The data come from the RNA Mapping Database (RMDB), library TTRINS. The record gives the reactivity of an RNA of 177 nucleotides to 2A3 and DMS. The RNA was probed in 150 mM KOAc, 10 mM MgCl2 and 150 mM bicine (pH 8.5) at 24 C. 2A3 adducts were read by reverse transcription with SuperScript II with manganese. Values are in units of 0.01, from 0 to 300, in steps of 10. For 2A3, 2,368 sequencing reads were counted. For DMS the reverse transcriptase was MarathonRT. Values cover nucleotides 27 to 126.

RNA sequence: GGGAACGACUCGAGUAGAGUCGAAAAGAUAUGGAUCCCACUGAGCUAUAUUCAGGCUUGGAUUUAGUGGGAGUCGGAAACGACUCCCACUUGUCAGCCUGAUAUAGUAAGGUGGGAUCCUAAGUCACAAUUAUAAUUACUUCGGUAAUUAUAAUUGAAAAGAAACAACAACAACAAC
Reactivity to 2A3 in 0.01 (KOAc 150mM, MgCl2 10mM, bicine 150mM(pH8.5), 24C), signal-to-noise 1, nucleotides 027 to 126: g060a000u060a030u190g000g000a000u030c030c000c000a000c010u010g000a030g090c020u010a000u000a030u180u300c050a010g040g000c040u150u300g300g020a070u300u300u210a020g000u030g040g000g000a030g000u000c010g050g000a230a040a030c030g000a000c000u030c000c000c000a000c000u000u000g010u000c010a000g000c000c000u010g000a000u010a000u000a000g000u010a010a000g010g000u000g000g000g000a000u020c000c000u010a000a020g010u020c010a010
Reactivity to DMS in 0.01 (KOAc 150mM, MgCl2 10mM, bicine 150mM(pH8.5), 24C), signal-to-noise 2, nucleotides 027 to 126: g010a080u000a300u010g010g000a000u000c000c000c000a020c000u010g000a300g020c000u000a010u000a010u020u000c010a010g010g000c010u010u020g030g020a020u010u000u000a000g030u010g000g010g000a010g010u000c000g000g000a050a140a270c000g030a000c000u000c000c000c000a020c000u000u000g000u000c010a020g000c020c000u010g000a000u000a000u000a010g010u020a010a300g010g010u000g010g010g010a000u000c000c000u000a020a050g010u010c020a270